Record summary
Source: RMDB library TTRDES, as collected in RNAgym. An RNA of 177 nucleotides, treated with DMS and 2A3 and read out base by base. For 2A3, 8,430 sequencing reads were counted. For DMS, 5,721 sequencing reads were counted. High DMS reactivity at an A or C suggests that its Watson-Crick edge is free.
RNA sequence: GGGAACGACUCGAGUAGAGUCGAAAAAAGAUAUGGAGCCUGUGUUUCGCAUCGAUCUAUACUAGUAGCUGUAUAUCGGAAACGAUAUACCGAAAGUAUAGGGAGCGAAACUGGGCUCCUAAGUCAACUUGUUAAGUAUCUUCGGAUACUUAACAAGAAAAGAAACAACAACAACAAC
Reactivity to DMS in 0.01 (KOAc 150mM, MgCl2 10mM, bicine 150mM(pH8.5), 24C), signal-to-noise 4, nucleotides 027 to 126: a100a100g000a020u000a050u010g000g000a010g030c000c000u000g010u010g010u000u000u000c000g020c000a300u010c240g000a010u020c000u010a010u000a000c000u010a130g010u010a140g010c070u010g010u010a010u000a000u000c010g010g000a020a010a040c010g010a010u000a010u000a000c010c050g000a080a090a100g010u000a000u000a020g000g000g000a000g040c020g010a000a010a010c000u000g000g000g000c000u000c000c000u000a000a070g000u000c000a130a220
Reactivity to 2A3 in 0.01 (KOAc 150mM, MgCl2 10mM, bicine 150mM(pH8.5), 24C), signal-to-noise 3, nucleotides 027 to 126: a000a000g020a010u010a000u050g010g000a010g040c040c030u230g110u090g050u300u010u000c010g020c040a130u300c120g010a010u010c000u000a010u000a010c040u030a050g300u150a050g110c030u010g000u000a000u010a000u000c010g020g000a010a000a010c000g000a000u000a000u000a000c010c010g030a140a030a000g000u000a000u000a000g000g000g000a020g010c020g000a000a010a000c000u000g000g020g000c000u000c000c000u000a000a000g000u010c000a010a050
Conditions: 150 mM KOAc, 10 mM MgCl2 and 150 mM bicine (pH 8.5), 24 C.